[RMDB]
RNA sequence: GGGAACGACUCGAGUAGAGUCGAAAACAGACCAAGUUCGCUUGGUCUGAAAGAAAGCGGAAAGCACCAGGGAGCGAAGGUGCGGGCCGCAACCACCCAUAAAAAGUACGAUCUUCGGAUCGUACAACCCUAACCCUAAGUUCGCUUAGGGUUAGGGAAAAGAAACAACAACAACAAC
Reactivity to DMS in 0.01 (KOAc 150mM, MgCl2 10mM, bicine 150mM(pH8.5), 24C), signal-to-noise 3, nucleotides 027 to 126: c010a010g020a000c000c000a000a000g010u010u020c270g040c000u010u000g000g000u000c000u000g000a020a050a110g020a080a070a130g020c020g000g000a020a010a220g010c010a010c010c000a200g030g010g020a130g010c140g000a080a160g000g010u000g010c000g000g000g000c000c010g000c020a030a100c150c130a170c000c000c010a140u030a040a020a050a120a100g010u000a000c000g010a020u000c000u000u020c210g030g000a000u010c000g000u030a010c000a070a070
Reactivity to 2A3 in 0.01 (KOAc 150mM, MgCl2 10mM, bicine 150mM(pH8.5), 24C), signal-to-noise 5, nucleotides 027 to 126: c000a000g010a000c000c000a000a000g010u020u060c130g020c160u000u000g000g010u010c000u010g000a000a010a020g040a010a060a000g010c010g000g010a070a030a010g010c000a000c010c000a070g100g100g080a200g150c130g070a120a040g000g000u000g000c000g000g050g000c000c000g000c000a000a000c010c010a010c010c000c000a050u210a050a130a010a010a000g000u000a000c000g000a010u000c010u030u100c200g090g000a000u010c000g000u000a000c000a000a010